About this RNA:
The record gives the reactivity of an RNA of 177 nucleotides to 2A3 and DMS. The data come from the RNA Mapping Database (RMDB), library M2PK50. 2A3 adducts were read by reverse transcription with SuperScript II with manganese. The reactions ran in a buffer of 150 mM KOAc, 10 mM MgCl2 and 150 mM bicine (pH 8.5), at 24 C.

RNA sequence: GGGAACGACUCGAGUAGAGUCGAAAACCCGUUUUGUUCGCAAAACGGGACUCUUCUUUGCUUGGCAGCAUAGCAGGUGUUGGCUGGACUGCUGGCUUAUCCUUGGAGGCAGUUUCGACUGCCUCAACUAAGAACGCUAGUUCGCUAGCGUUCUUAGAAAAGAAACAACAACAACAAC
Reactivity to 2A3 in 0.01 (KOAc 150mM, MgCl2 10mM, bicine 150mM(pH8.5), 24C), signal-to-noise 5, nucleotides 027 to 126: c010c000c010g000u000u000u000u000g020u020u050c210g000c100a000a000a000a010c000g000g000g040a070c030u020c000u200u010c000u080u110u110g000c020u040u200g060g020c020a010g000c020a100u070a080g010c030a030g020g150u140g100u300u210g140g050c010u030g010g050a090c000u010g020c000u010g020g000c000u010u090a120u080c010c040u020u140g220g010a010g010g000c000a010g000u000u050u170c180g060a030c000u010g010c000c000u000c000a010a000
Reactivity to DMS in 0.01 (KOAc 150mM, MgCl2 10mM, bicine 150mM(pH8.5), 24C), signal-to-noise 6, nucleotides 027 to 126: c020c000c000g010u000u010u000u000g010u000u010c190g030c010a010a010a010a010c000g010g000g010a070c090u000c080u000u000c040u000u000u000g010c010u000u010g020g010c070a030g000c080a120u000a030g010c020a070g010g020u000g020u010u010g010g010c020u010g010g030a150c020u000g000c020u000g010g000c010u000u010a090u000c050c040u000u010g030g000a020g010g000c000a010g000u000u000u010c180g010a030c000u000g000c000c000u000c000a010a090